Chemical mapping of a 177-nucleotide RNA with DMS and 2A3. For DMS, 1,430 sequencing reads were counted. The RNA was probed in 150 mM KOAc, 10 mM MgCl2 and 150 mM bicine (pH 8.5) at 24 C. The data come from the RNA Mapping Database (RMDB), library M2PK50. For 2A3 the reverse transcriptase was SuperScript II with manganese.
RNA sequence: GGGAACGACUCGAGUAGAGUCGAAAAUCAUGUUUAUUCGUAAACAUGAAACGCCGCACGGCGCGCCUGGCCACCAGGGAACGAGGAUAUGGAAGCCUGAGAAUGAGGUGCCGUUCGCGGCACCUAAGUAUGCUUGGAGAUUCGUCUCCAAGCAUACAAAAGAAACAACAACAACAAC
Reactivity to DMS in 0.01 (KOAc 150mM, MgCl2 10mM, bicine 150mM(pH8.5), 24C), signal-to-noise 2, nucleotides 027 to 126: u000c000a010u000g000u000u000u000a020u000u030c130g010u000a010a010a000c010a000u000g020a020a130a130c120g010c030c010g040c180a090c130g010g020c020g010c130g000c060c050u000g000g000c040c020a120c080c030a020g000g000g000a050a070c090g010a090g000g000a050u000a110u000g020g020a070a080g000c040c040u000g020a120g020a080a110u020g000a020g000g000u000g000c000c000g060u000u010c200g000c010g020g000c000a020c010c000u000a000a050
Reactivity to 2A3 in 0.01 (KOAc 150mM, MgCl2 10mM, bicine 150mM(pH8.5), 24C), signal-to-noise 1, nucleotides 027 to 126: u020c000a000u040g010u000u010u010a060u030u060c170g060u040a010a000a000c000a000u000g000a080a060a000c050g010c020c020g200c080a090c120g000g040c050g000c040g030c020c010u010g000g000c000c020a090c040c030a070g060g000g030a050a000c040g030a030g100g000a050u050a060u250g030g050a050a040g040c040c000u010g040a060g120a170a140u180g030a070g000g020u020g000c040c010g020u020u070c180g010c030g090g000c020a020c010c020u000a020a010